[RMDB]
Chemical mapping of a 177-nucleotide RNA with DMS and 2A3.
RNA sequence: GGGAACGACUCGAGUAGAGUCGAAAAUUGUCUAUGGAGGCCAUAUGUCCCCUGUCCAGCAAGGGAUUGGGUAAUGUGCAGCUAGGUCGGCUCAGCCUGCAUACAAUCGAAGCCACCAGCUUGACGGCCCCGUAUACUGAUUCGUCAGUAUACGGGGAAAAGAAACAACAACAACAAC
Reactivity to DMS in 0.01 (KOAc 150mM, MgCl2 10mM, bicine 150mM(pH8.5), 24C), signal-to-noise 3, nucleotides 027 to 126: u000u000g000u000c040u000a120u010g010g000a120g010g000c020c070a120u000a080u010g010u000c090c000c030c040u000g010u000c040c090a100g020c130a080a090g000g000g000a050u000u000g000g010g010u000a070a080u000g010u010g010c050a030g030c030u000a070g000g010u000c110g030g020c020u000c090a110g020c100c020u010g020c030a030u000a020c140a060a060u010c070g000a070a100g000c010c020a050c040c040a070g010c080u000u000g000a040c060g020g000
Reactivity to 2A3 in 0.01 (KOAc 150mM, MgCl2 10mM, bicine 150mM(pH8.5), 24C), signal-to-noise 4, nucleotides 027 to 126: u040u030g020u000c030u030a110u100g160g070a080g030g010c020c020a070u070a070u260g060u040c010c010c020c010u010g020u000c010c000a030g040c050a140a090g130g010g020a010u030u080g060g010g000u100a140a130u090g030u060g050c010a000g010c010u080a070g020g130u210c100g070g070c030u010c010a030g030c020c010u010g030c010a010u040a090c050a000a080u090c080g080a030a000g050c010c000a030c010c020a030g030c030u020u080g020a040c020g050g020
The RNA was probed in 150 mM KOAc, 10 mM MgCl2 and 150 mM bicine (pH 8.5) at 24 C.